The data come from the RNA Mapping Database (RMDB), library OK3TST.
This 207-nucleotide RNA was probed chemically with DMS and 2A3.
The reactions ran in a buffer of 150 mM KOAc, 10 mM MgCl2 and 150 mM bicine (pH 8.5), at 24 C.

[RMDB]
RNA sequence: GGGAACGACUCGAGUAGAGUCGAAAAAAUCUGGAGGACAAGCUAAGAAUAAUACUGGAGCAGGAGAAGAGAUUGGAAUACCCUCCCAACGAUUCCAUAGUCUAGAAAUGAAAUUAAUAACAUGUAACUGUUCCCAAUGCUGUAAACUAAACACCCACAUACAUGCAGAAUUCGUUCUGCAUGUAUGAAAAGAAACAACAACAACAAC
Reactivity to DMS in 0.01 (KOAc 150mM, MgCl2 10mM, bicine 150mM(pH8.5), 24C), signal-to-noise 2, nucleotides 027 to 156: a060a080u000c040u020g040g040a140g010g000a140c070a040a090g010c090u000a050a120g010a080a080u000a100a090u000a090c040u010g010g010a110g050c060a070g010g020a090g010a080a080g020a090g010a100u020u000g020g000a060a070u010a110c060c010c040u000c040c010c010a070a090c080g000a130u010u000c010c010a060u000a110g020u000c060u010a150g030a070a130a130u020g000a060a060a110u010u000a010a110u010a080a110c050a070u000g000u000a050a070c030u000g010u000u010c000c030c000a050a100u010g000c010u010g020u000a060a090a130c040u000a080a070a090c070a130c050c010c040a150
Reactivity to 2A3 in 0.01 (KOAc 150mM, MgCl2 10mM, bicine 150mM(pH8.5), 24C), signal-to-noise 2, nucleotides 027 to 156: a000a000u030c020u050g040g000a020g050g010a040c030a050a010g000c010u080a040a020g020a100a100u110a090a110u090a110c040u090g020g040a020g000c030a030g030g030a070g030a100a000g050a020g020a060u040u060g030g020a060a050u260a260c020c010c000u020c020c010c000a040a010c070g020a060u030u040c000c000a020u020a060g020u000c040u010a040g060a050a070a050u060g000a120a040a030u120u090a000a050u110a110a020c030a020u060g000u010a020a080c020u020g010u020u000c040c020c000a030a080u040g000c000u020g040u110a070a010a030c020u050a000a030a010c070a070c040c000c040a010